[RMDB]
RNA sequence: GGGAACGACUCGAGUAGAGUCGAAAAUUUUACCGCUUAGCUAAUGAGUGUGCUCAAGUGCUAAGUGAAUAUGUUCUGUGCGGUGGUGGUUACUACGUUAAACCUGGUGGUACCAGUAGCGGUGAUGUCUAUCCAAUCAUUUCGAUGAUUGGAUAGAAAAAGAAACAACAACAACAAC
Reactivity to 2A3 in 0.01 (KOAc 150mM, MgCl2 10mM, bicine 150mM(pH8.5), 24C), signal-to-noise 6, nucleotides 027 to 126: u080u070u030u070a060c040c010g010c010u000u000a000g000c000u020a040a070u050g010a020g040u270g080u260g230c000u010c020a050a050g030u020g040c010u010a000a010g000u000g010a010a020u220a110u130g080u050u040c050u040g100u050g050c020g020g030u050g010g030u020g000g020u050u030a040c040u020a030c040g080u060u120a090a070a050c010c010u030g050g000u030g020g030u040a060c010c010a050g030u030a010g020c040g020g030u060g050a080u090g020
Reactivity to DMS in 0.01 (KOAc 150mM, MgCl2 10mM, bicine 150mM(pH8.5), 24C), signal-to-noise 9, nucleotides 027 to 126: u010u010u000u010a120c140c020g010c010u000u000a010g010c000u010a300a180u010g000a020g010u010g030u020g030c010u000c010a020a070g010u000g010c000u000a010a020g010u000g000a080a100u000a080u000g010u000u000c050u000g010u000g020c090g000g010u000g010g020u000g010g010u000u000a060c070u010a060c110g010u000u010a040a090a130c130c040u000g010g010u000g000g000u000a200c050c030a070g010u000a070g020c060g020g010u010g010a080u000g010